[RMDB]
RNA sequence: GGGAACGACUCGAGUAGAGUCGAAAAAGGUGCCGCAGAUCGAUGCGGGAUCCUGGCUGCUGCUCAGUGCGUCCGAAGCUGAUCCGCUGACCGCGCAACUCGCCGACGCGUUGAAUGCCGUUGGUGCCACACUUAGAUUAUUCGUAAUCUAAGUGUGAAAAGAAACAACAACAACAAC
Reactivity to 2A3 in 0.01 (KOAc 150mM, MgCl2 10mM, bicine 150mM(pH8.5), 24C), signal-to-noise 9, nucleotides 027 to 126: a000g070g000u060g070c000c010g000c010a010g030a240u270c170g080a100u070g010c010g010g010g010a030u060c000c010u010g030g000c010u130g020c010u010g000c010u010c030a020g020u050g110c020g020u010c010c010g030a040a010g020c060u050g030a070u030c020c020g000c050u030g040a060c010c020g000c010g000c040a040a080c020u020c050g000c010c010g010a010c010g050c040g040u070u090g160a190a060u160g020c020c010g010u010u030g020g010u040g050c030
Reactivity to DMS in 0.01 (KOAc 150mM, MgCl2 10mM, bicine 150mM(pH8.5), 24C), signal-to-noise 9, nucleotides 027 to 126: a060g010g020u000g000c010c010g020c010a030g000a140u010c220g010a110u000g010c020g000g000g000a030u000c010c030u000g010g010c030u000g020c030u000g010c040u000c030a040g010u000g010c100g000u000c020c020g010a110a090g010c050u000g000a070u000c090c050g010c030u000g000a090c080c090g010c070g010c060a080a080c100u000c050g010c010c020g000a040c040g010c150g010u000u010g010a110a120u010g000c020c020g010u000u000g010g010u000g010c160
The data come from the RNA Mapping Database (RMDB), library OK2TST. An RNA of 177 nucleotides, treated with 2A3 and DMS and read out base by base. 2A3 adducts were read by reverse transcription with SuperScript II with manganese. The RNA was probed in 150 mM KOAc, 10 mM MgCl2 and 150 mM bicine (pH 8.5) at 24 C. For DMS the reverse transcriptase was MarathonRT.